[RMDB]
RNA sequence: GGGAACGACUCGAGUAGAGUCGAAAACUGUACAAGAUCAAGGACGGGGACGCUCGCGUCCUCAUCGUGGUCCCGGACGGGCAGGUCACGGAAACGGGCGAGGUGUCGUUCGUCAAGUCCGGCGCGAUCCUGUGGCCGGUGACGCUGACGACUUACCGCCUACGAAACAUUUCGAUGUUUCGUAGGCAAAAGAAACAACAACAACAAC
Reactivity to 2A3 in 0.01 (KOAc 150mM, MgCl2 10mM, bicine 150mM(pH8.5), 24C), signal-to-noise 1, nucleotides 027 to 156: c030u060g110u210a060c050a070a090g010a270u070c030a090a000g080g000a040c020g000g020g010g000a000c000g000c030u000c080g100c040g000u000c000c000u010c000a000u020c040g040u030g030g060u130c040c000c050g000g060a020c110g050g030g020c090a020g110g000u080c000a010c060g000g090a060a110a040c010g000g000g030c030g020a100g040g050u100g120u010c000g000u000u050c000g070u030c050a060a000g060u010c000c010g010g000c040g000c050g040a200u190c060c000u120g020u070g100g060c000c000g050g050u040g000a020c000g110c090u070g020a040c030g030a030c050u000u030a040c110c070